[RMDB]
RNA sequence: GGGAACGACUCGAGUAGAGUCGAAAAAUCUGAGCUAUCUAGACUACGAUACAAUCUAUGUAAGUAUCUACGCGGACACACUGAGAGCAUAGAGGAUAAAUUUGAUUAUUUUGAAGACGAUGAUUCGUCUACAUGUUCUGCCGUAACCGACAGGGAACUAGAAACUUGCAUUCGUGCAAGUUUCUAGAAAAGAAACAACAACAACAAC
Reactivity to DMS in 0.01 (KOAc 150mM, MgCl2 10mM, bicine 150mM(pH8.5), 24C), signal-to-noise 2, nucleotides 027 to 156: a050u000c040u000g000a100g040c030u000a090u000c060u000a170g030a190c030u000a080c130g050a100u000a050c000a130a130u010c070u020a040u010g020u000a100a180g020u010a080u000c050u010a070c070g000c050g050g010a090c010a060c030a130c060u020g020a120g010a080g010c040a100u000a080g020a170g050g020a090u000a010a040a170u000u000u010g000a130u000u000a060u020u020u000u000g000a180a010g020a030c000g010a080u020g040a230u000u000c010g000u000c020u000a030c060a100u010g010u000u010c010u010g010c000c010g010u020a060a120c300c000g030a010c000a050g020g000g010a040a180
Reactivity to 2A3 in 0.01 (KOAc 150mM, MgCl2 10mM, bicine 150mM(pH8.5), 24C), signal-to-noise 4, nucleotides 027 to 156: a000u070c070u050g010a010g030c040u060a040u130c030u080a040g070a150c070u070a040c180g040a030u020a050c060a100a120u060c050u150a130u150g080u080a090a100g000u000a020u000c020u040a010c060g020c010g010g030a030c010a000c010a000c150u070g060a020g000a000g090c010a030u020a020g050a010g070g020a010u060a060a100a050u160u120u110g050a040u010u160a070u040u170u060u090g050a040a020g010a000c010g020a000u140g030a090u210u020c000g000u000c010u010a030c010a030u050g010u050u010c020u040g040c010c000g000u030a040a050c020c000g050a000c010a020g020g030g020a000a020

Structure probing data (DMS and 2A3) for a 207-nucleotide construct. DMS adducts were read by reverse transcription with MarathonRT. For DMS, 2,421 sequencing reads were counted. For 2A3, 1,846 sequencing reads were counted. The data come from the RNA Mapping Database (RMDB), library OK3TST. The RNA was probed in 150 mM KOAc, 10 mM MgCl2 and 150 mM bicine (pH 8.5) at 24 C.